The record gives the reactivity of an RNA of 177 nucleotides to 2A3.
The reactions ran in a buffer of 150 mM KOAc, 10 mM MgCl2 and 150 mM bicine (pH 8.5), at 24 C.

[RMDB]
RNA sequence: GGGAACGACUCGAGUAGAGUCGAAAACACGCAAGUAGUAAAGUUUCGCACGACGGACUUUACCGUGGCGGAUAACUUCGAUUUUGUCAACACGUGGUGUGUGGAUUGGGAAUGUACGCUCUACCCCUCGUACCGGCGCGUUCGCGCGCCGGUACGAAAAAGAAACAACAACAACAAC
Reactivity to 2A3 in 0.01 (KOAc 150mM, MgCl2 10mM, bicine 150mM(pH8.5), 24C), signal-to-noise 2, nucleotides 027 to 126: c050a050c000g000c000a050a040g060u250a000g000u050a170a010a010g000u080u160u040c000g000c050a090c160g300a210c000g050g000a000c000u000u140u040a000c050c070g100u080g030g010c000g040g000a130u180a200a300c000u200u210c070g040a110u060u000u070u300g130u040c130a140a190c030a060c160g240u260g030g010u060g080u070g030u040g080g030a080u000u000g290g000g000a040a020u160g000u190a010c070g000c000u000c000u040a080c000c000c000c020
Values are in units of 0.01, from 0 to 300, in steps of 10.